[RMDB]
RNA sequence: GGGAACGACUCGAGUAGAGUCGAAAAACGCAUCAUAUGUGAUGCGAGAACUACAGUUCCGCUCCUCUAGCACACAGAGGUCAAUUGGGUGCGACCCCCCCCUCUCCCGUGGGUCAACGGGAACCAAAAAAGACCCUUUAGUUCGCUAAAGGGUCAAGAAAAUCUCUAUGUUCGCAUAGAGAUUUUCAAAAGAAACAACAACAACAAC
Reactivity to DMS in 0.01 (KOAc 150mM, MgCl2 10mM, bicine 150mM(pH8.5), 24C), signal-to-noise 1, nucleotides 027 to 156: a130c020g000c010a000u000c000a170u000a180u010g030u000g020a010u010g010c000g000a060g010a050a080c040u000a090c110a150g000u000u000c010c040g040c020u010c000c000u060c040u000a100g040c060a080c070a080c140a060g010a040g040g020u000c060a060a120u000u010g000g000g030u010g030c030g020a300c000c000c000c000c000c000c000c000u020c060u020c000c000c000g000u000g010g000g000u000c100a050a060c020g000g020g000a020a110c050c080a010a030a040a060a130a140g000a040c000c010c000u000u000u000a020g030u000u000c300g040c030u000a020a000a020g000g030g020u000c010a000a000
Reactivity to 2A3 in 0.01 (KOAc 150mM, MgCl2 10mM, bicine 150mM(pH8.5), 24C), signal-to-noise 3, nucleotides 027 to 156: a000c010g010c010a010u010c020a020u090a140u300g180u130g050a060u080g000c030g010a110g000a010a040c110u270a100c080a070g010u030u000c000c010g020c050u040c000c000u030c020u050a070g040c040a010c000a010c010a050g020a000g000g040u040c020a040a050u080u070g070g010g000u020g010c010g150a200c010c000c010c020c000c000c000c000u020c000u000c000c010c000g000u000g000g000g030u070c040a010a000c000g000g000g000a000a000c010c020a000a010a050a020a070a090g010a010c000c000c020u000u000u000a010g000u040u050c140g000c160u000a010a000a000g010g000g000u010c000a000a000
Structure probing data (DMS and 2A3) for a 207-nucleotide construct.
Source: RMDB library M2RFPK, as collected in RNAgym.
Reactivities are rounded to 0.1 and cut off at 0 and 3.
For 2A3, 2,594 sequencing reads were counted.